[RMDB]
RNA sequence: GGGAACGACUCGAGUAGAGUCGAAAACUAUAGUACCGUGACGAUGAGGCCAUGCCCUCAUAGCGCCCUUGAGCCACGGGCUCGGAUCGUACGGACCCCUCAGCUCUACCACCCGUAGCUCUGGAUGUAUGAAGGCCAAAUUCGUUUGGCCUUCAUAAAAAGAAACAACAACAACAAC
Reactivity to 2A3 in 0.01 (KOAc 150mM, MgCl2 10mM, bicine 150mM(pH8.5), 24C), signal-to-noise 1, nucleotides 027 to 126: c000u010a010u080a280g120u080a180c000c080g000u030g130a090c040g040a030u060g010a030g060g000c010c140a210u140g020c060c010c020u010c000a010u030a060g060c050g000c010c010c080u020u150g000a010g000c000c020a080c040g000g060g000c060u070c030g030g000a050u040c030g000u100a050c050g050g060a080c010c010c040c020u030c050a000g050c030u000c050u040a030c010c020a050c010c000c000g020u060a030g030c000u000c020u070g050g020a020u030g040
Reactivity to DMS in 0.01 (KOAc 150mM, MgCl2 10mM, bicine 150mM(pH8.5), 24C), signal-to-noise 2, nucleotides 027 to 126: c060u000a080u000a090g020u000a100c050c050g000u000g020a060c050g060a050u000g000a050g010g020c000c150a100u000g000c130c020c030u000c030a040u010a070g020c090g020c050c020c060u010u020g010a080g000c080c040a050c140g010g000g000c040u000c110g000g000a060u010c070g000u010a070c050g000g000a080c030c010c010c020u000c060a090g000c050u000c050u020a080c040c050a110c000c030c050g020u000a070g020c020u010c020u000g000g010a170u000g010